[RMDB]
RNA sequence: GGGAACGACUCGAGUAGAGUCGAAAAGCGGAACAGGUGGAUGCCCGUCACGGGGACUCGUACCACAGGGAGUGCGAACACCAGCAUAGCCGAUGUCUGCGACCCGGGUGAGAGGCGCCGGUUGGCGCACGUACGUUGGGUUCGCCCAACGUACGUGAAAAGAAACAACAACAACAAC
Reactivity to DMS in 0.01 (KOAc 150mM, MgCl2 10mM, bicine 150mM(pH8.5), 24C), signal-to-noise 8, nucleotides 027 to 126: g010c010g000g000a050a070c060a170g010g020u000g000g010a080u010g000c010c030c050g000u010c130a090c160g010g020g000g000a130c150u010c020g010u000a070c030c030a130c130a160g010g010g010a140g020u010g000c020g000a050a090c110a110c070c030a150g000c030a040u010a210g000c020c020g010a110u030g000u010c030u000g010c020g000a090c010c010c010g010g000g000u010g000a080g010a080g000g000c020g000c010c000g010g020u020u030g000g010c020g010
Reactivity to 2A3 in 0.01 (KOAc 150mM, MgCl2 10mM, bicine 150mM(pH8.5), 24C), signal-to-noise 9, nucleotides 027 to 126: g020c020g010g020a040a040c020a060g050g020u050g050g160a070u110g040c010c030c030g100u130c050a060c130g010g000g010g040a030c010u010c040g020u040a040c010c030a060c080a180g080g050g040a120g020u050g010c000g010a050a010c040a050c050c020a010g000c030a060u050a030g010c010c010g050a050u080g030u040c020u040g000c020g060a090c000c000c010g010g000g030u100g040a140g010a030g040g010c000g010c010c000g140g020u130u240g040g000c010g010